Chemical mapping of a 177-nucleotide RNA with 2A3 and DMS. It was measured as part of the RMDB library RFM100. The reactions ran in a buffer of 150 mM KOAc, 10 mM MgCl2 and 150 mM bicine (pH 8.5), at 24 C. For 2A3 the reverse transcriptase was SuperScript II with manganese.
[RMDB]
RNA sequence: GGGAACGACUCGAGUAGAGUCGAAAAAAUGAAAGUCCAGAGAGGCUUGGAAGGGUUAUGAAGAGAAGGAAGCUUCAAUGCUGCCCUCUAUUUAACCAUACCCCGAGUCUAUCUUAGACCGGGGUUUUACAAGCAGUGGUUUCGACCACUGCUUGUAAAAAGAAACAACAACAACAAC
Reactivity to 2A3 in 0.01 (KOAc 150mM, MgCl2 10mM, bicine 150mM(pH8.5), 24C), signal-to-noise 2, nucleotides 027 to 126: a000a000u300g040a040a000a000g010u000c000c060a040g020a040g030a160g220g030c040u120u030g110g000a080a080g130g000g010u040u000a040u040g110a130a040g030a000g010a040a220g010g000a020a020g000c010u280u120c180a150a130u300g000c010u030g000c000c030c000u000c000u030a080u010u060u030a040a030c000c000a010u040a050c000c000c010c010g090a090g020u040c000u020a060u050c130u100u130a020g000a000c010c010g000g000g000g000u000u000u000
Reactivity to DMS in 0.01 (KOAc 150mM, MgCl2 10mM, bicine 150mM(pH8.5), 24C), signal-to-noise 1, nucleotides 027 to 126: a130a050u010g010a030a000a070g020u000c030c100a240g010a210g120a090g000g010c110u070u020g020g040a030a060g040g010g040u000u000a000u000g020a080a000g020a050g000a100a160g000g000a070a070g000c000u000u000c300a040a050u000g000c010u000g000c000c000c000u000c040u000a060u020u000u030a060a000c070c000a110u000a050c010c030c000c010g010a040g000u020c000u000a050u020c140u030u000a000g020a000c010c010g040g000g010g010u000u020u000